[RMDB]
RNA sequence: GGGAACGACUCGAGUAGAGUCGAAAAGGUCACCGAUUUGAGGAGUCUAUCGUGAUCACUAAUACUGGUAGUCGGACGAUUGAAACUGCCAGCAUUUCACUCGCAGAGACAUCUCUCAAUUUAGAUGCGAUUGAUCCAGGCGAGCAGUCGACGGUAAUGUGGCUGCACGCUUCGGCGUGCAGCCACAAAAAGAAACAACAACAACAAC
Reactivity to 2A3 in 0.01 (KOAc 150mM, MgCl2 10mM, bicine 150mM(pH8.5), 24C), signal-to-noise 1, nucleotides 027 to 156: g040g020u010c040a000c000c000g000a010u070u000u030g060a110g070g000a010g080u000c000u040a150u030c010g000u000g040a010u040c040a020c200u150a040a040u030a110c050u020g050g050u110a120g020u040c040g080g110a120c100g130a150u070u240g120a120a150a000c030u000g010c000c000a000g050c030a060u000u080u050c090a030c040u010c040g000c120a080g000a000g020a070c020a060u060c040u000c000u000c100a010a010u020u290u300a110g000a120u090g010c020g020a000u010u010g000a100u060c000c020a030g120g140c050g020a010g000c000a000g000u100c040g000a000c070g000g060u130a170a100

Structure probing data (2A3) for a 207-nucleotide construct.
For 2A3 the reverse transcriptase was SuperScript II with manganese.
Conditions: 150 mM KOAc, 10 mM MgCl2 and 150 mM bicine (pH 8.5), 24 C.
Source: RMDB library OK3TST, as collected in RNAgym.